Structure probing data (DMS and 2A3) for a 177-nucleotide construct. DMS (dimethyl sulfate) methylates the pairing face of unpaired adenines and cytosines.
[RMDB]
RNA sequence: GGGAACGACUCGAGUAGAGUCGAAAAAUUGGCUACACAUUAGCAGAUGUAUUUCUCAUCUAUUGGAGGAUUUGGUCAGGACCCUGGGGCACAGAUCAGACCCUGCACUGUUUUGCAGAAGCCUCAGAUCCAACGAGUAUUUCGAUACUCGUUGGAUAAAAGAAACAACAACAACAAC
Reactivity to DMS in 0.01 (KOAc 150mM, MgCl2 10mM, bicine 150mM(pH8.5), 24C), signal-to-noise 3, nucleotides 027 to 126: a090u010u010g000g010c000u010a070c190a050c100a070u020u000a080g020c090a040g000a060u010g000u010a090u010u010u000c050u000c050a080u000c090u000a070u000u010g010g020a070g020g000a090u010u020u000g030g010u010c020a040g000g000a120c080c050c040u000g030g010g000g030c060a100c100a050g000a070u000c050a070g010a070c060c050c020u000g000c060a090c130u000g010u000u000u020u000g020c080a050g010a130a160g010c020c010u000c030a080g010
Reactivity to 2A3 in 0.01 (KOAc 150mM, MgCl2 10mM, bicine 150mM(pH8.5), 24C), signal-to-noise 2, nucleotides 027 to 126: a000u040u030g020g030c020u050a050c070a020c010a180u170u080a040g110c060a040g040a120u040g040u090a120u040u150u010c050u000c010a100u050c030u100a170u150u200g080g010a040g010g010a040u080u010u150g030g010u010c070a050g050g050a040c020c000c010u020g020g000g000g000c010a020c020a040g070a080u140c000a030g010a050c020c020c000u040g080c030a020c010u080g030u190u080u050u060g020c010a020g030a150a000g030c000c000u010c000a020g010